[RMDB]
RNA sequence: GGGAACGACUCGAGUAGAGUCGAAAACAGAAAGCACGAAACCAAAACUCUCGACUUGCCUCUGUGCAAUGUCGUUUCUAUGCUCAGGGCCGCUGCCGUAAUGGUCUCAACUGUCGCUUCGCUCACAGAAGACAUGCUAUUUCGAUAGCAUGUCUUCAAAAGAAACAACAACAACAAC
Reactivity to 2A3 in 0.01 (KOAc 150mM, MgCl2 10mM, bicine 150mM(pH8.5), 24C), signal-to-noise 3, nucleotides 027 to 126: c030a020g130a070a090a010g050c030a030c110g060a130a050a070c050c020a030a030a080a120c060u050c020u020c040g020a010c000u020u040g010c000c020u180c130u270g080u140g050c010a020a030u140g010u000c000g000u000u020u010c040u050a110u130g010c010u020c070a030g000g000g000c020c010g020c070u040g000c000c010g020u050a040a100u120g010g030u040c000u030c040a040a120c020u060g030u080c020g000c040u020u030c020g000c030u030c010a090c030a080
Reactivity to DMS in 0.01 (KOAc 150mM, MgCl2 10mM, bicine 150mM(pH8.5), 24C), signal-to-noise 3, nucleotides 027 to 126: c080a090g000a080a100a080g000c070a050c110g000a070a060a090c100c080a040a050a110a160c100u000c060u000c020g000a040c030u000u010g020c040c020u000c140u020g010u010g000c050a040a030u000g010u000c010g010u000u000u000c020u000a060u010g000c060u010c060a100g000g020g010c050c050g020c060u010g000c020c030g020u010a070a100u010g010g000u000c020u000c060a060a080c080u010g000u000c070g020c040u000u000c070g000c030u000c080a070c200a090
Description:
Conditions: 150 mM KOAc, 10 mM MgCl2 and 150 mM bicine (pH 8.5), 24 C. An RNA of 177 nucleotides, treated with 2A3 and DMS and read out base by base. The DMS profile rests on 2,969 reads.